This 177-nucleotide RNA was probed chemically with DMS. In probing experiments dimethyl sulfate is read out at A N1 and C N3, which are open when not base-paired.
[RMDB]
RNA sequence: GGGAACGACUCGAGUAGAGUCGAAAACUACAGGUCAAACAGUCUCCGUAUGCCUUCCAGCAAAUGAAGACCCAGUAGAGUUUCCAGGGGCGUUCUUCACUCCAAAUGCUAGGAAACCGACGGUGUAUAAAGGGGUCUAAUUCGUUAGACCCCUUUAAAAAGAAACAACAACAACAAC
Reactivity to DMS in 0.01 (KOAc 150mM, MgCl2 10mM, bicine 150mM(pH8.5), 24C), signal-to-noise 1, nucleotides 027 to 126: c030u000a020c060a110g000g030u000c050a080a100a090c170a110g010u000c030u010c040c000g040u010a050u010g020c090c030u030u010c080c090a090g030c020a030a080a060u000g030a100a100g000a030c030c030c020a070g020u000a140g010a130g000u010u000u000c000c020a210g020g020g010g010c020g000u000u010c050u000u010c030a060c080u000c090c100a030a050a140u000g020c080u000a180g000g000a030a050a070c150c060g010a050c050g000g010u020g000u010a200
It was measured as part of the RMDB library OK2TST. For DMS the reverse transcriptase was MarathonRT.